[RMDB]
The record gives the reactivity of an RNA of 177 nucleotides to DMS and 2A3. 2A3 adducts were read by reverse transcription with SuperScript II with manganese.
RNA sequence: GGGAACGACUCGAGUAGAGUCGAAAAUCAACUCUUAAUAAUAGAUUGUAGUGGCUAUGCUUGUGGGAUAGAGUGAUUUUUGCCAUGAUCUGAAGAGGGAGGUUUAUUGUGUCCUCCUCCUAUAUGAGGGAUUUACCUAGUUCGCUAGGUAAAUCCCAAAAGAAACAACAACAACAAC
Reactivity to DMS in 0.01 (KOAc 150mM, MgCl2 10mM, bicine 150mM(pH8.5), 24C), signal-to-noise 1, nucleotides 027 to 126: u000c000a070a240c030u000c000u010u000a030a070u070a160a110u020a010g040a110u020u020g010u090a070g000u060g000g010c050u010a070u020g040c000u050u000g080u070g010g030g010a170u020a050g000a010g020u000g010a070u000u000u000u000u000g000c070c050a010u000g030a040u010c010u000g060a070a040g000a010g010g050g000a080g050g000u010u020u040a080u000u110g000u000g000u030c000c000u000c000c000u000c050c010u020a100u020a090u030g070a300
Reactivity to 2A3 in 0.01 (KOAc 150mM, MgCl2 10mM, bicine 150mM(pH8.5), 24C), signal-to-noise 4, nucleotides 027 to 126: u090c020a020a150c000u010c010u110u190a080a040u130a120a030u110a110g000a010u030u060g050u070a080g040u020g030g000c010u010a020u040g000c010u070u020g040u110g070g120g010a050u060a080g040a030g020u080g100a110u030u020u050u070u120g000c010c010a040u070g050a020u030c010u070g040a020a000g030a060g030g030g010a000g030g000u010u060u070a150u100u100g040u020g030u040c010c000u010c000c000u010c030c010u080a110u030a080u190g070a130